An RNA of 177 nucleotides, treated with 2A3 and DMS and read out base by base. The RNA was probed in 150 mM KOAc, 10 mM MgCl2 and 150 mM bicine (pH 8.5) at 24 C. Source: RMDB library OK2TST, as collected in RNAgym.

[RMDB]
RNA sequence: GGGAACGACUCGAGUAGAGUCGAAAAGUGAAGAAAAUUGAGCCCUUCACAGGACAGCUGAACAUCGAGGCUGGGCCCAUCAGACUUGGAGACACCGAUGCCCUUCGGCGUCUGGAGCUUGUGAUGGCACAAUAACAGUGUUCGCACUGUUAUUGUGAAAAGAAACAACAACAACAAC
Reactivity to 2A3 in 0.01 (KOAc 150mM, MgCl2 10mM, bicine 150mM(pH8.5), 24C), signal-to-noise 7, nucleotides 027 to 126: g000u010g010a010a020g060a030a150a090a130u230u180g050a080g020c020c010c000u020u020c020a020c010a020g040g110a030c010a010g000c010u050g030a110a040c040a220u140c090g060a040g010g000c020u020g020g040g020c020c020c000a010u020c010a010g100a070c020u040u080g130g170a020g000a010c020a010c020c010g030a040u070g060c030c020c000u020u020c010g010g000c000g010u000c010u030g020g010a020g020c040u080u080g110u040g070a020u030g030g000
Reactivity to DMS in 0.01 (KOAc 150mM, MgCl2 10mM, bicine 150mM(pH8.5), 24C), signal-to-noise 9, nucleotides 027 to 126: g020u000g010a030a030g000a060a050a080a180u010u010g010a150g020c140c090c010u000u000c010a010c010a150g010g010a150c040a030g010c010u000g010a110a110c150a090u010c100g010a160g010g000c030u000g000g000g010c080c000c020a050u000c030a050g000a040c020u000u000g020g010a050g000a020c030a040c020c010g000a030u010g000c130c130c090u000u000c020g010g020c030g010u000c000u000g000g010a030g010c060u000u010g020u000g000a030u000g010g000